[RMDB]
Structure probing data (DMS and 2A3) for a 177-nucleotide construct. The DMS profile rests on 1,151 reads. The 2A3 profile rests on 1,407 reads. It was measured as part of the RMDB library OK2TRN.
RNA sequence: GGGAACGACUCGAGUAGAGUCGAAAACAGCUUGCGCAGGAUCUCAUCCUCAAACUGCAGAGACGUGCAUGAGCGCAGCCGAGGAGCCGAGGGUGGGCUGAGCUUGGGCCCAGGCUGCCGCGACUGCGGUCUCAGCCGAAUUCGUUCGGCUGAGACCAAAAGAAACAACAACAACAAC
Reactivity to DMS in 0.01 (KOAc 150mM, MgCl2 10mM, bicine 150mM(pH8.5), 24C), signal-to-noise 2, nucleotides 027 to 126: c060a120g010c060u000u010g000c150g050c040a060g020g020a150u000c040u000c040a070u000c040c000u020c050a110a060a220c090u000g000c080a150g010a050g010a060c120g010u010g000c030a030u000g000a300g000c050g000c020a020g030c010c030g000a160g000g010a100g020c000c020g000a080g000g010g030u000g000g000g010c030u010g010a100g000c060u000u000g030g010g020c010c000c030a200g000g000c040u000g010c040c000g010c000g010a150c090u000g010c000
Reactivity to 2A3 in 0.01 (KOAc 150mM, MgCl2 10mM, bicine 150mM(pH8.5), 24C), signal-to-noise 1, nucleotides 027 to 126: c030a000g080c000u070u080g000c010g000c080a030g070g070a120u010c020u070c060a040u020c040c020u050c030a230a090a070c040u030g010c050a010g020a000g010a070c070g090u110g000c020a060u050g070a010g010c000g020c030a000g000c000c000g040a250g010g030a060g030c010c000g020a070g050g070g000u050g070g040g000c090u110g060a040g070c050u170u100g110g020g000c000c010c040a010g020g010c010u150g060c040c020g010c000g030a010c030u030g000c060